[RMDB]
An RNA of 207 nucleotides, treated with 2A3 and DMS and read out base by base.
RNA sequence: GGGAACGACUCGAGUAGAGUCGAAAACAGGGCGUUUCGAUAGGCCCAAUUUACUAUCGAGAUUACAUCGUGGGAGACCACGUAGAGACCGCAACUGCUGGGUCGAUGAACAGCAGAGUUACACCGCAUUUCGUUGCGCGGGAUGAAGCAACGUACACCUAAAUCACUCGUUCGCGAGUGAUUUAGGAAAAGAAACAACAACAACAAC
Reactivity to 2A3 in 0.01 (KOAc 150mM, MgCl2 10mM, bicine 150mM(pH8.5), 24C), signal-to-noise 2, nucleotides 027 to 156: c060a030g000g000g010c020g000u090u090u000c000g010a010u000a010g030g010c000c040c000a000a070u060u060u080a040c010u000a000u000c000g000a000g030a060u210u280a050c060a060u170c050g000u000g000g030g000a030g060a040c000c000a020c050g000u010a070g030a010g000a000c000c000g030c070a090a010c080u010g000c000u000g010g010g010u040c100g060a150u190g040a020a020c010a010g000c000a000g000a020g020u020u070a050c110a040c030c080g000c020a010u060u090u120c000g000u000u000g040c010g000c010g020g000g050a080u200g130a070a030g010c010a010a000c000g000u040a050c040a060
Reactivity to DMS in 0.01 (KOAc 150mM, MgCl2 10mM, bicine 150mM(pH8.5), 24C), signal-to-noise 1, nucleotides 027 to 156: c080a100g030g020g030c070g060u000u020u000c000g010a050u000a020g020g030c040c060c050a080a040u000u000u010a110c040u000a000u000c000g000a010g010a140u010u000a100c160a020u000c040g030u010g000g050g040a300g000a300c000c000a020c010g030u000a050g000a130g000a060c000c000g010c060a090a150c030u000g030c000u000g010g010g000u000c070g000a190u000g010a110a050c010a040g000c020a000g000a160g000u000u000a040c050a170c040c040g020c020a050u010u000u000c100g010u000u000g000c030g000c060g030g030g000a050u030g000a070a190g010c000a030a040c010g000u000a100c140a070
For 2A3 the reverse transcriptase was SuperScript II with manganese. Conditions: 150 mM KOAc, 10 mM MgCl2 and 150 mM bicine (pH 8.5), 24 C.